[RMDB]
RNA sequence: GGGAACGACUCGAGUAGAGUCGAAAAUCCAGUCGGCGGGCCGGCUACUCUUCUUUCCCUUCUCUCGUCUUCCUCGGUCAACCUCUUAAGUUCCUCUUCUUCUUCCUUGCUGAGGUUCUUCCCUCCCCCCCGAGUUUGUUCGCAAACUCGAAAAGAAACAACAACAACAAC
Reactivity to DMS in 0.01 (KOAc 150mM, MgCl2 10mM, bicine 150mM(pH8.5), 24C), signal-to-noise 9, nucleotides 027 to 129: u020c020c020a100g050u020c070g000g000c070g010g010g000c010c030g020g000c050u010a010c070u000c050u000u030c050u020u020u010c030c020c010u020u030c050u000c030u000c060g020u000c030u050u020c010c010u020c060g010g040u030c090a060a120c070c030u010c050u030u030a100a130g030u040u020c030c020u010c070u020u020c020u000u000c010u030u020c020c000u020u020g000c020u000g030a100g000g020u000u000c060u000u040c000c000c010u020c010c000c000c010c010c020
Reactivity to 2A3 in 0.01 (KOAc 150mM, MgCl2 10mM, bicine 150mM(pH8.5), 24C), signal-to-noise 9, nucleotides 027 to 129: u020c000c010a000g090u030c020g030g040c020g000g020g040c000c020g020g010c000u060a080c030u040c020u070u030c020u030u050u050c010c000c010u090u030c040u010c010u010c020g060u010c030u110u050c020c010u020c020g020g010u050c040a070a080c020c010u060c020u080u100a100a040g020u040u020c000c010u010c000u040u000c000u040u010c000u040u040c020c000u030u060g030c020u020g020a040g040g030u060u020c010u030u020c010c000c000u020c000c000c000c000c000c000
The data come from the RNA Mapping Database (RMDB), library 15KLIB. The record gives the reactivity of an RNA of 170 nucleotides to DMS and 2A3. 2A3 adducts were read by reverse transcription with SuperScript II with manganese. The 2A3 profile rests on 81,826 reads. For DMS the reverse transcriptase was MarathonRT.